An RNA of 177 nucleotides, treated with DMS and 2A3 and read out base by base. As a SHAPE reagent, 2A3 marks flexible, mostly unpaired nucleotides at the ribose 2'-OH. Source: RMDB library OK2TRN, as collected in RNAgym. Reactivities are given for positions 27 through 126. The DMS profile rests on 1,186 reads.
[RMDB]
RNA sequence: GGGAACGACUCGAGUAGAGUCGAAAAUGCGCUUAGCAGCGAACAGAAUGGGCGACCUGCCGGGCUCGGGCUCCACCGCUCAACCACGGGAUGCUGCUGUCACCGGUACCGGUGGUAAUUCCACGGCGGCACUAGUUCUAUUCGUAGAACUAGUGCCAAAAGAAACAACAACAACAAC
Reactivity to DMS in 0.01 (KOAc 150mM, MgCl2 10mM, bicine 150mM(pH8.5), 24C), signal-to-noise 2, nucleotides 027 to 126: u000g020c040g010c070u010u020a060g040c080a060g000c000g000a230a110c100a060g020a090a100u010g000g010g000c010g030a060c200c150u010g010c040c040g000g010g030c080u010c070g010g000g030c070u000c020c090a050c110c040g020c030u010c050a090a090c070c060a180c110g000g000g000a160u020g000c030u000g000c030u010g030u000c050a020c070c000g020g000u020a060c160c010g020g030u000g020g000u010a020a130u030u000c020c030a100c090g000g030c110
Reactivity to 2A3 in 0.01 (KOAc 150mM, MgCl2 10mM, bicine 150mM(pH8.5), 24C), signal-to-noise 1, nucleotides 027 to 126: u090g000c030g000c040u090u180a020g010c040a000g000c030g030a010a010c030a020g140a160a140u080g010g070g010c000g010a020c030c050u020g080c070c000g010g050g020c060u100c010g020g090g000c000u100c050c000a070c040c020g040c010u050c060a040a120c020c010a030c020g000g000g010a040u120g000c080u030g000c060u060g020u060c020a040c020c010g030g100u180a220c140c020g000g030u000g020g030u030a040a100u050u000c050c000a060c070g060g040c000